[RMDB]
RNA sequence: GGGAACGACUCGAGUAGAGUCGAAAACAUGCUCUUUAAGAAGUGAUCAACGGGCGUUGGAAGUGCUGUUGAGGAUGUGGAUCCUUUUUUUUUUUUAAACAGAAUGGACCGUCCAGUAAGUGAUCCGGCUGCAUGAUUAUUUCGAUAAUCAUGCAGCAAAAGAAACAACAACAACAAC
Reactivity to 2A3 in 0.01 (KOAc 150mM, MgCl2 10mM, bicine 150mM(pH8.5), 24C), signal-to-noise 4, nucleotides 027 to 126: c030a060u130g040c010u020c010u060u210u120a190a040g070a070a030g110u200g140a040u020c020a010a030c060g020g000g000c020g050u080u140g040g030a070a050g030u020g050c020u000g020u010u040g020a010g000g000a010u050g140u190g300g080a070u080c000c000u060u000u010u000u000u000u000u000u000u000u040u110a030a050a010c020a010g040a050a030u020g000g040a010c010c020g010u020c000c070a060g050u130a180a070g020u010g020a040u010c010c000g060
Reactivity to DMS in 0.01 (KOAc 150mM, MgCl2 10mM, bicine 150mM(pH8.5), 24C), signal-to-noise 2, nucleotides 027 to 126: c080a100u060g000c070u010c000u000u030u020a050a130g000a100a130g000u020g010a060u010c020a050a060c060g000g000g030c010g000u060u030g020g000a300a140g040u000g000c000u000g030u000u010g000a050g020g000a000u000g000u110g000g000a020u000c000c000u000u000u010u000u000u000u000u020u020u000u180u030a100a010a010c050a000g010a040a010u000g000g010a180c030c030g010u000c000c000a130g010u010a070a070g000u000g000a010u000c020c020g000